This 177-nucleotide RNA was probed chemically with DMS and 2A3.
The reactions ran in a buffer of 150 mM KOAc, 10 mM MgCl2 and 150 mM bicine (pH 8.5), at 24 C.
For 2A3 the reverse transcriptase was SuperScript II with manganese.
The 2A3 profile rests on 923 reads.
It was measured as part of the RMDB library RFMREP.

RNA sequence: GGGAACGACUCGAGUAGAGUCGAAAAAAGGGGCGGGCGACGGUAGGUCAGUAUGCCCCGAAACCCCCGGGCUACACGCGCGCUACAAUGGGCGGGACAAUGGGACCCGACCCCGAAAGGGGAAGGGCAGUGUCAAUUUGUUCGCAAAUUGACACUGAAAAGAAACAACAACAACAAC
Reactivity to DMS in 0.01 (KOAc 150mM, MgCl2 10mM, bicine 150mM(pH8.5), 24C), signal-to-noise 1, nucleotides 027 to 126: a050a040g000g000g010g010c010g000g000g020c120g010a020c030g020g040u000a050g010g010u000c010a030g040u000a110u010g010c010c010c020c000g000a040a060a090c020c000c010c020c020g000g000g020c110u000a040c040a100c030g050c050g000c070g020c050u000a110c150a030a080u010g020g020g000c040g000g000g000a140c110a000a040u000g020g000g000a170c000c000c000g000a280c000c000c000c000g000a060a070a200g010g000g010g010a010a240g000g010g000
Reactivity to 2A3 in 0.01 (KOAc 150mM, MgCl2 10mM, bicine 150mM(pH8.5), 24C), signal-to-noise 1, nucleotides 027 to 126: a000a000g010g000g020g000c020g020g020g050c030g010a020c070g140g300u300a250g300g000u030c060a020g000u030a060u040g010c010c000c000c030g000a020a010a010c010c000c010c010c010g050g010g040c040u090a020c060a010c060g000c000g030c010g010c030u120a110c090a140a160u090g070g040g010c020g060g000g000a030c020a090a130u060g020g000g080a010c000c000c020g020a010c000c010c000c000g010a040a000a020g030g000g010g000a000a020g000g000g000